[RMDB]
Description
Structure probing data (2A3 and DMS) for a 177-nucleotide construct.

RNA sequence: GGGAACGACUCGAGUAGAGUCGAAAAACAAGGUGCUGGAUUCACAGUAAAUCAUACACCUUCUAAAGGCGCUAUCCUACAAUCUUCUGAAGGACCAUUUGGUCACGUUGCAUAUGUAGAAAGUGUAACUCAUUAGGUGGUUCGCCACCUAAUGAGUAAAAGAAACAACAACAACAAC
Reactivity to 2A3 in 0.01 (KOAc 150mM, MgCl2 10mM, bicine 150mM(pH8.5), 24C), signal-to-noise 4, nucleotides 027 to 126: a000c040a000a000g020g010u010g010c050u120g100g040a060u040u040c110a060c020a290g100u270a040a050a000u040c020a000u060a090c020a020c040c000u090u000c100u100a170a130a030g100g000c000g000c000u020a070u130c010c000u010a020c010a020a040u000c010u070u000c040u120g130a190a080g110g010a010c020c000a120u150u190u300g010g000u000c000a010c030g000u000u000g010c050a030u160a140u200g000u000a020g050a040a050a000g040u040g000u070a050
Reactivity to DMS in 0.01 (KOAc 150mM, MgCl2 10mM, bicine 150mM(pH8.5), 24C), signal-to-noise 3, nucleotides 027 to 126: a090c140a050a050g010g020u000g010c120u010g020g020a000u000u010c080a170c180a140g010u010a050a040a040u010c030a080u010a130c030a030c010c010u000u010c190u020a040a110a110g000g000c070g010c020u000a090u000c040c020u020a040c070a050a060u000c020u000u010c020u010g030a080a140g010g010a020c020c000a290u000u000u010g020g020u000c050a070c050g040u000u010g010c110a020u000a080u000g000u010a030g000a040a050a040g010u000g010u000a060
Values cover nucleotides 27 to 126. For 2A3 the reverse transcriptase was SuperScript II with manganese.